RNA sequence: GGGAACGACUCGAGUAGAGUCGAAAACAUCGCAUUUGCGAUGAACGUCGCCAUCUUUUACAUCUUCAAGACGAUGUCUAUCCGUGUAACGAGCGAGGACGUGUUCAAUAUGAUAUCACAGGUGGGAGGACAGAAGAUCGCAGACUUUUUGCGUCAAAUUCAUCCCACACUUCGGUGUGGGAUGAAUAAAAGAAACAACAACAACAAC
Reactivity to 2A3 in 0.01 (KOAc 150mM, MgCl2 10mM, bicine 150mM(pH8.5), 24C), signal-to-noise 1, nucleotides 027 to 156: c030a050u160c010g000c030a170u200u120u300g000c000g000a000u000g050a020a010c000g070u090c040g080c080c000a060u010c050u050u160u040u040a050c100a060u040c000u010u140c080a050a000g020a020c030g060a030u070g000u000c000u050a130u010c010c000g120u060g080u100a110a020c040g040a050g100c050g020a040g020g000a020c040g020u030g010u080u050c010a020a030u130a210u170g050a030u050a020u160c080a040c060a100g000g010u010g000g000g000a020g000g030a000c040a060g080a120a000g060a030u100c000g030c010a000g040a240c100u070u100u000u110u040g030c030g020u070c030a080a080

An RNA of 207 nucleotides, treated with 2A3 and read out base by base. The RNA was probed in 150 mM KOAc, 10 mM MgCl2 and 150 mM bicine (pH 8.5) at 24 C. 2A3 adducts were read by reverse transcription with SuperScript II with manganese. The 2A3 profile rests on 508 reads.